Overview: The record gives the reactivity of an RNA of 177 nucleotides to 2A3. As a SHAPE reagent, 2A3 marks flexible, mostly unpaired nucleotides at the ribose 2'-OH.
RNA sequence: GGGAACGACUCGAGUAGAGUCGAAAAAGCCGACGUACUUACGAGUACGUCGGCAAUGACACAUUCUCCGGAAUCUCUGUACUGCCUCUGAUGAAAGUAUAAUUGAACCCUUUUCCAUCUGAUGAAAGCUAUCCGGGUCAUUCGUGACCCGGAUAGCAAAAGAAACAACAACAACAAC
Reactivity to 2A3 in 0.01 (KOAc 150mM, MgCl2 10mM, bicine 150mM(pH8.5), 24C), signal-to-noise 1, nucleotides 027 to 126: a000g000c000c000g030a000c010g000u000a000c000u040u040a010c300g020a000g000u110a000c000g060u000c000g000g010c000a000a000u000g000a000c000a000c000a140u020u020c040u000c000c000g000g000a040a020u040c020u000c010u110g040u060a070c000u030g010c030c000u000c000u050g120a110u110g030a040a040a040g180u020a100u170a170a190u090u070g060a120a110c010c000c000u030u000u040u110c100c140a090u020c040u230g140a180u140g000a090a090a050